The data come from the RNA Mapping Database (RMDB), library M2RFPK.
An RNA of 207 nucleotides, treated with 2A3 and read out base by base.
For 2A3 the reverse transcriptase was SuperScript II with manganese.
The reactions ran in a buffer of 150 mM KOAc, 10 mM MgCl2 and 150 mM bicine (pH 8.5), at 24 C.
Reactivities are given for positions 27 through 156.
RNA sequence: GGGAACGACUCGAGUAGAGUCGAAAAGCGCGAAGUGGUGUAGCGUCACUUUGAUGGCGGUACUAUGAAUUGAUGCAAGGUGUGGAGCGACCUUAAACAGUUCUGGUGGUGCUCUGAAUGGAGUGCUUGAGGCCUCGCCGAUUCGUCGGCGAGGCAAGUUCUAAUUCGCCUUCGGGCGAAUUAGAACAAAAGAAACAACAACAACAAC
Reactivity to 2A3 in 0.01 (KOAc 150mM, MgCl2 10mM, bicine 150mM(pH8.5), 24C), signal-to-noise 1, nucleotides 027 to 156: g040c040g010c060g060a030a010g030u000g020g000u040g040u050a010g040c000g020u000c020a000c070u060u210u290g120a240u030g010g000c020g000g080u020a020c020u050a050u180g040a100a130u110u050g060a070u110g040c040a060a040g000g000u010g010u040g010g000a010g030c030g020a040c000c000u060u080a060a150a070c030a080g000u010u010c000u040g030g020u040g020g010u000g010c040u000c020u070g100a080a030u280g030g000a020g000u000g030c000u010u100g080a080g100g000c000c000u010c020g000c000c000g000a000u020u070c100g040u000c000g090g000c010g000a000g000g000c000a000a000